[RMDB]
RNA sequence: GGGAACGACUCGAGUAGAGUCGAAAACAGGGGGUUGCGGAGAAUCCCAUACACGGGCACUGUGUGCAUCCGCAAUGUGUACAGCAAGGAUAAAAAGCCCUAAUCUUAAAUUCGCGAUUUGCGUCAAUCAUCGAACAGGUUUCGACCUGUUCGAUGAAAAAGAAACAACAACAACAAC
Reactivity to DMS in 0.01 (KOAc 150mM, MgCl2 10mM, bicine 150mM(pH8.5), 24C), signal-to-noise 2, nucleotides 027 to 126: c090a150g000g000g050g030g010u000u000g010c000g050g020a120g020a140a020u010c000c030c000a140u020a060c150a040c070g010g030g030c050a090c020u020g030u050g000u010g030c030a010u000c010c090g000c060a070a070u010g010u000g010u020a090c070a100g030c130a080a100g010g030a050u040a070a020a170a050a090g000c000c000c010u000a060a070u050c080u010u000a030a130a210u020u000c000g010c000g000a100u020u070u010g000c110g000u000c150a040a110
Reactivity to 2A3 in 0.01 (KOAc 150mM, MgCl2 10mM, bicine 150mM(pH8.5), 24C), signal-to-noise 2, nucleotides 027 to 126: c030a000g020g020g020g000g020u080u110g050c060g010g060a010g010a010a150u030c010c000c000a000u070a000c130a010c050g000g000g000c040a000c100u030g000u020g020u000g030c020a010u020c000c010g000c000a030a000u020g000u010g020u010a000c000a000g000c000a110a030g060g020a030u150a190a150a030a040a000g000c000c000c000u030a030a000u060c010u020u050a020a260a120u130u080c010g030c010g140a210u100u060u250g000c030g000u060c030a060a070
Notes: The record gives the reactivity of an RNA of 177 nucleotides to DMS and 2A3. Conditions: 150 mM KOAc, 10 mM MgCl2 and 150 mM bicine (pH 8.5), 24 C. For DMS, 1,894 sequencing reads were counted. Reactivities are rounded to 0.1 and cut off at 0 and 3. The data come from the RNA Mapping Database (RMDB), library OK1LIB.